[RMDB]
RNA sequence: GGGAACGACUCGAGUAGAGUCGAAAAUUAAAGGAGGUGGAGGAGUGUGUGUCUUCCCAGCUGCUGAGUAGAACCUCCGCACACACGCGAAAGCUACGAGCAGCAGCAGUGCGGAAACGGUGAAAAACCAAGCUAAGCAGUUCGCUGCUUAGCUUGGAAAAGAAACAACAACAACAAC
Reactivity to DMS in 0.01 (KOAc 150mM, MgCl2 10mM, bicine 150mM(pH8.5), 24C), signal-to-noise 1, nucleotides 027 to 126: u020u000a060a100a040g000g000a090g020g010u000g010g000a030g000g000a030g040u030g010u010g000u020g010u000c060u000u000c000c010c010a180g000c030u000g010c010u000g010a190g020u020a040g000a120a060c030c020u000c060c000g030c010a050c060a070c190a040c150g010c010g000a040a140a140g000c030u000a040c060g010a070g010c040a030g010c100a040g030c010a080g000u000g000c010g000g010a050a030a030c070g000g030u000g000a020a010a050a090a140

Structure probing data (DMS) for a 177-nucleotide construct. The RNA was probed in 150 mM KOAc, 10 mM MgCl2 and 150 mM bicine (pH 8.5) at 24 C. The DMS profile rests on 751 reads. It was measured as part of the RMDB library M2PK90.